[RMDB]
RNA sequence: GGGAACGACUCGAGUAGAGUCGAAAAGCUUAAUAACCUGCGCUGAGCCCUUCUCCCCCAGCUUGCCUGUGUCCUAGGGAAUUGGAAGGUCAUCCUUCACAGGAUGGUGUGGAAGUCCUGCUCGGGGUCCAAACAUGGUAAUUCGUUACCAUGUUAAUAUACACAGUGUUUUCGAACACUGUGUAUAAAAAGAAACAACAACAACAAC
Reactivity to 2A3 in 0.01 (KOAc 150mM, MgCl2 10mM, bicine 150mM(pH8.5), 24C), signal-to-noise 3, nucleotides 027 to 156: g020c000u050u110a050a000u070a180a210c010c040u070g040c040g000c060u060g020a030g030c040c010c020u070u080c100u070c010c020c000c000c000a010g030c040u050u130g030c000c010u020g000u010g030u060c010c030u020a020g010g040g070a060a090u130u060g030g000a060a060g050g010u060c000a030u040c010c000u110u060c050a010c000a050g030g000a020u040g000g020u060g020u000g070g010a050a050g050u100c000c010u010g030c000u000c020g010g000g000g010u000c020c030a020a010a000c000a000u010g000g010u000a000a030u070u080c110g020u040u000a000c000c010a000u010g000u000u000a010a000
Reactivity to DMS in 0.01 (KOAc 150mM, MgCl2 10mM, bicine 150mM(pH8.5), 24C), signal-to-noise 3, nucleotides 027 to 156: g010c050u000u000a080a090u000a100a080c030c010u000g020c060g030c040u000g010a120g010c050c030c040u000u000c060u000c060c020c020c020c050a110g040c030u010u010g000c020c010u000g020u010g020u010c040c030u010a150g020g000g010a070a130u000u010g020g020a120a100g020g000u000c020a060u000c020c010u000u010c140a110c100a080g020g010a050u000g000g010u000g020u020g010g000a130a150g020u000c020c030u000g020c040u000c050g020g000g050g010u000c030c040a080a020a020c000a020u000g010g020u000a020a070u000u010c290g040u000u000a010c000c000a010u000g020u000u000a020a120